An RNA of 177 nucleotides, treated with DMS and 2A3 and read out base by base. The data come from the RNA Mapping Database (RMDB), library TTRINS. For DMS, 4,631 sequencing reads were counted. For DMS the reverse transcriptase was MarathonRT. The RNA was probed in 150 mM KOAc, 10 mM MgCl2 and 150 mM bicine (pH 8.5) at 24 C.
RNA sequence: GGGAACGACUCGAGUAGAGUCGAAAAGAUAUGGAAUAGAGGGAGUGCUGUGGCUAUGACCCUCGACCAUAUCGGAAACGAUAUGCGUCGAGCAUAGCCACAGCACAUCGAUCUCUAUUCCUAAGUCCGUGCUAUUAAAGUUCGCUUUAAUAGCACGAAAAGAAACAACAACAACAAC
Reactivity to DMS in 0.01 (KOAc 150mM, MgCl2 10mM, bicine 150mM(pH8.5), 24C), signal-to-noise 4, nucleotides 027 to 126: g010a090u010a300u000g000g000a030a010u000a010g010a000g010g000g000a060g020u000g020c010u000g030u000g000g010c000u000a020u000g000a220c300c220c030u000c010g030a010c010c000a000u010a000u000c000g010g000a120a100a220c010g000a010u000a000u000g010c300g010u000c010g000a030g000c010a010u000a030g010c000c000a000c000a000g000c000a000c010a010u010c130g000a090u020c000u000c000u000a020u000u000c000c000u000a020a110g010u000c040
Reactivity to 2A3 in 0.01 (KOAc 150mM, MgCl2 10mM, bicine 150mM(pH8.5), 24C), signal-to-noise 1, nucleotides 027 to 126: g040a030u140a090u210g000g010a010a010u000a010g000a010g010g030g000a010g010u000g020c000u000g000u010g030g000c000u020a040u070g120a270c060c000c000u010c000g010a000c000c000a010u000a010u010c000g000g000a090a080a020c010g010a000u000a000u020g150c270g000u000c010g000a010g020c000a000u010a000g000c010c000a000c000a000g000c010a000c000a000u010c010g000a000u020c010u000c000u000a000u010u000c000c000u010a060a020g040u010c040